[RMDB]
RNA sequence: GGGAACGACUCGAGUAGAGUCGAAAAUCUCAUUUCGAUGAGACAAACUCCUAAGUCUGUAGCGAGGCAUGUCACUGACGAUGAGUAUUCGGAAACGAAUACGAGUCAAACAUGCCGAUGAGCUACAGAUAUGGAAUGGAUUGAGCUUCGGCUCAAAGAUGAAACUUACGUUCGCGUAAGUUUCAUCAAAAGAAACAACAACAACAAC
Reactivity to DMS in 0.01 (KOAc 150mM, MgCl2 10mM, bicine 150mM(pH8.5), 24C), signal-to-noise 2, nucleotides 027 to 156: u000c020u000c010a000u000u010u000c200g010a090u010g000a030g000a070c100a100a140a110c120u000c000c020u000a070a300g000u000c020u000g010u000a000g000c000g020a250g000g000c000a030u000g010u000c000a080c030u000g030a030c050g020a160u000g020a300g030u000a000u000u000c000g020g010a220a120a270c010g000a010a000u000a000c000g030a260g020u000c000a050a150a000c000a010u000g000c010c000g010a030u000g030a220g000c000u000a010c000a010g020a000u000a130u000g010g000a130a160u000g000g000a250u000u000g010a030g020c020u000u010c300g020g010c010u010c010a010a050a140
Reactivity to 2A3 in 0.01 (KOAc 150mM, MgCl2 10mM, bicine 150mM(pH8.5), 24C), signal-to-noise 6, nucleotides 027 to 156: u010c000u000c000a040u090u160u130c250g170a050u040g010a020g010a030c070a030a170a080c040u020c010c000u050a100a080g020u000c000u000g000u000a000g000c020g030a070g010g010c000a000u000g000u000c000a000c060u010g000a000c000g190a250u260g090a030g050u000a000u000u000c010g030g040a080a090a090c010g000a000a000u000a000c000g010a020g000u000c000a060a110a010c000a000u000g000c000c000g000a000u010g010a020g010c000u000a000c000a000g000a000u010a010u030g020g030a040a060u080g100g110a070u050u090g000a000g000c020u050u090c300g110g000c000u010c030a000a020a060
Structure probing data (DMS and 2A3) for a 207-nucleotide construct.
High 2A3 reactivity points to a flexible backbone, as in loops and unpaired stretches.
The RNA was probed in 150 mM KOAc, 10 mM MgCl2 and 150 mM bicine (pH 8.5) at 24 C.
It was measured as part of the RMDB library RNAMAK.